Structure probing data (2A3 and DMS) for a 177-nucleotide construct.
RNA sequence: GGGAACGACUCGAGUAGAGUCGAAAAUAGCACGUGUGCCGGACACUAUUUAAGGGCCCGCCUCUCCUGGCUCACAGCUGCUUGCUGCUCCAGCCUUGCCCUCCCAGAGCUGCCGGACGCUCGCGGGCGGCGUAUAUGGGUUCGCCCAUAUACGCCGAAAAGAAACAACAACAACAAC
Reactivity to 2A3 in 0.01 (KOAc 150mM, MgCl2 10mM, bicine 150mM(pH8.5), 24C), signal-to-noise 5, nucleotides 027 to 126: u090a010g050c020a020c140g050u060g010u050g050c020c020g020g020a020c020a020c090u120a170u130u200u140a120a110g050g010g010c030c030c020g050c020c020u060c010u020c000c010u030g030g000c000u010c010a060c010a010g020c030u060g040c030u070u140g010c020u020g010c000u020c030c020a030g000c000c010u030u100g020c000c000c000u000c000c010c010a010g010a010g020c030u030g030c010c010g030g010a010c020g010c010u020c000g040c060g000g020g020
Reactivity to DMS in 0.01 (KOAc 150mM, MgCl2 10mM, bicine 150mM(pH8.5), 24C), signal-to-noise 9, nucleotides 027 to 126: u000a050g020c080a080c110g020u000g010u000g010c020c010g010g010a270c080a080c060u000a080u000u010u010a120a130g010g000g010c020c030c040g010c040c060u000c060u000c020c030u000g010g000c040u000c070a070c060a070g000c050u000g010c130u010u000g010c030u000g010c050u000c050c080a070g000c020c030u000u010g010c030c010c020u000c020c010c020a160g000a060g010c030u000g010c030c030g000g010a080c190g010c020u000c040g010c080g010g000g010
DMS (dimethyl sulfate) methylates the pairing face of unpaired adenines and cytosines. For DMS the reverse transcriptase was MarathonRT. It was measured as part of the RMDB library OK2TST.